An RNA of 177 nucleotides, treated with DMS and 2A3 and read out base by base. It was measured as part of the RMDB library OK1LIB. DMS adducts were read by reverse transcription with MarathonRT.

[RMDB]
RNA sequence: GGGAACGACUCGAGUAGAGUCGAAAAAGGCAAUUUGUUCGGGUGAUAUUUCAGCCUGGGAAUGAGUGUAUGGGGUGUUGGAAGCCGAACACAUGAUAGGCAUUUGUAUCAUUUCAGGUUGUGUGCCGAUAUUACGCGGUUUCGACCGCGUAAUAUCAAAAGAAACAACAACAACAAC
Reactivity to DMS in 0.01 (KOAc 150mM, MgCl2 10mM, bicine 150mM(pH8.5), 24C), signal-to-noise 2, nucleotides 027 to 126: a100g000g010c020a120a030u000u010u020g000u010u020c060g000g000g000u000g000a060u000a070u010u010u000c090a040g010c030c000u000g000g000g010a090a050u010g030a050g020u020g000u040a060u020g000g020g010g000u000g000u010u010g000g020a080a100g000c010c010g000a020a070c060a020c170a050u000g000a140u010a100g010g010c020a100u020u020u000g010u010a050u000c020a020u000u000u000c070a100g010g000u000u000g010u010g010u000g010c140c050
Reactivity to 2A3 in 0.01 (KOAc 150mM, MgCl2 10mM, bicine 150mM(pH8.5), 24C), signal-to-noise 1, nucleotides 027 to 126: a000g070g000c020a030a070u000u040u160g070u030u050c010g040g000g020u020g090a060u010a070u050u110u000c040a030g000c000c000u050g010g000g020a050a030u060g000a000g010u110g000u060a020u000g010g000g010g000u020g080u040u050g010g020a060a000g000c010c010g030a020a000c000a000c000a020u140g000a030u120a070g020g020c000a010u000u000u180g100u010a070u000c000a010u000u150u010c020a000g000g000u000u000g000u010g000u050g010c020c010